[RMDB]
RNA sequence: GGGAACGACUCGAGUAGAGUCGAAAAGAUGUUGACACUGGCACUACUGGCAAGUUUACAAUUCCUAGAAUCAAGGCACUAUCCGACAAAAUGAGAUUUCCAAGAGUUGGUAAAACCGUUGUGCUCAGUCUCUAAAUAAGUUCGCUUAUUUAGAGACAAAAGAAACAACAACAACAAC
Reactivity to DMS in 0.01 (KOAc 150mM, MgCl2 10mM, bicine 150mM(pH8.5), 24C), signal-to-noise 9, nucleotides 027 to 126: g000a070u000g010u000u010g010a080c100a080c060u010g000g010c050a060c070u000a070c070u000g010g010c080a060a080g010u010u000u000a060c090a050a110u010u000c020c020u010a090g010a070a060u010c070a080a100g000g010c050a040c060u000a070u010c040c030g000a060c100a030a050a100a100u010g000a130g000a130u000u000u000c040c030a060a090g000a150g010u000u000g000g010u000a050a040a050a100c300c100g000u000u000g010u000g000c030u000c050a300
Reactivity to 2A3 in 0.01 (KOAc 150mM, MgCl2 10mM, bicine 150mM(pH8.5), 24C), signal-to-noise 4, nucleotides 027 to 126: g040a030u110g040u090u030g030a030c030a020c110u030g040g030c000a010c060u080a020c020u090g010g020c060a070a080g000u040u080u060a050c030a010a030u030u030c010c000u030a060g070a010a050u130c070a060a050g030g020c030a010c050u090a070u070c010c030g040a020c050a050a220a020a010u120g030a060g020a130u070u060u000c050c000a050a020g050a010g100u050u010g040g110u100a060a030a040a040c040c020g020u030u030g020u010g010c000u000c030a010
Source: RMDB library OK2TRN, as collected in RNAgym. An RNA of 177 nucleotides, treated with DMS and 2A3 and read out base by base. For DMS, 13,977 sequencing reads were counted. For 2A3, 5,165 sequencing reads were counted. Reactivities are given for positions 27 through 126. Conditions: 150 mM KOAc, 10 mM MgCl2 and 150 mM bicine (pH 8.5), 24 C.